[RMDB]
RNA sequence: GGGAACGACUCGAGUAGAGUCGAAAAGGAACAUCCUUCGGGAUGUUCCAUAGGCGGCGCCUCUCGCUAAGCGCCGCGCAGAGGCGCGCAGCGCAGCUUGAAAGUAAGCCUAGUUCGCUAGGCUUAAAUUCCAGAUAGUUUUCGAACUAUCUGGAAUAAAAGAAACAACAACAACAAC
Reactivity to DMS in 0.01 (KOAc 150mM, MgCl2 10mM, bicine 150mM(pH8.5), 24C), signal-to-noise 6, nucleotides 027 to 126: g000g010a010a000c000a000u000c000c000u000u020c210g020g010g010a010u000g000u000u000c000c000a030u000a040g010g010c010g010g010c010g000c010c020u000c020u000c060g010c050u010a100a130g010c160g020c110c150g020c040g010c130a030g000a030g000g010c020g020c010g010c040a040g010c020g020c070a060g000c060u000u000g000a080a070a110g000u000a010a010g000c000c000u000a010g010u000u010c190g010c000u000a010g000g000c000u000u000a000a050
Reactivity to 2A3 in 0.01 (KOAc 150mM, MgCl2 10mM, bicine 150mM(pH8.5), 24C), signal-to-noise 2, nucleotides 027 to 126: g020g000a010a010c030a020u000c000c020u040u040c190g030g010g000a000u000g000u000u010c000c000a000u010a000g040g000c030g010g020c010g010c010c010u030c020u000c020g000c030u060a100a110g190c100g050c090c040g000c030g000c010a010g020a010g050g060c030g000c080g010c040a050g000c090g010c000a020g030c020u060u090g080a060a080a060g070u090a000a010g000c000c000u010a010g020u030u040c100g010c080u000a010g000g000c000u010u000a000a030
Background:
The record gives the reactivity of an RNA of 177 nucleotides to DMS and 2A3. For DMS, 10,815 sequencing reads were counted. The RNA was probed in 150 mM KOAc, 10 mM MgCl2 and 150 mM bicine (pH 8.5) at 24 C.